[RMDB]
Conditions: 150 mM KOAc, 10 mM MgCl2 and 150 mM bicine (pH 8.5), 24 C. Chemical mapping of a 177-nucleotide RNA with DMS and 2A3. It was measured as part of the RMDB library OK2TRN.
RNA sequence: GGGAACGACUCGAGUAGAGUCGAAAACAUCUGGGCGAAGGACCCUGAGGAGUGACAGGUGGUCUGGUGGUGACUCCACAGCCGUCACCAGCCCCAGUCUAGCAGCUCUGACUUUCACAGCUGAGAGGGAUCCAAUUACAUUCGUGUAAUUGGAUCCAAAAGAAACAACAACAACAAC
Reactivity to DMS in 0.01 (KOAc 150mM, MgCl2 10mM, bicine 150mM(pH8.5), 24C), signal-to-noise 3, nucleotides 027 to 126: c060a080u000c020u000g020g020g020c080g030a100a080g000g010a130c030c030c020u010g000a080g010g000a070g010u010g010a030c010a030g030g010u010g010g010u010c020u000g010g010u000g000g020u000g020a040c010u000c150c250a110c170a060g050c020c020g010u000c000a010c010c000a030g000c000c000c000c000a060g030u010c020u010a100g000c080a100g010c010u000c060u000g000a160c100u000u010u010c070a070c060a050g000c130u010g010a110g010a150g010
Reactivity to 2A3 in 0.01 (KOAc 150mM, MgCl2 10mM, bicine 150mM(pH8.5), 24C), signal-to-noise 2, nucleotides 027 to 126: c030a070u040c040u070g010g010g000c080g110a160a050g090g050a080c030c010c000u030g040a070g060g030a090g060u130g040a020c050a040g000g020u070g020g050u150c000u030g030g000u020g000g020u000g030a020c000u010c080c030a050c080a050g000c020c000g000u040c000a000c010c010a000g000c020c010c000c000a000g020u000c020u070a050g030c040a020g010c030u000c010u030g050a040c020u200u220u120c100a070c000a040g030c010u080g050a060g010a050g180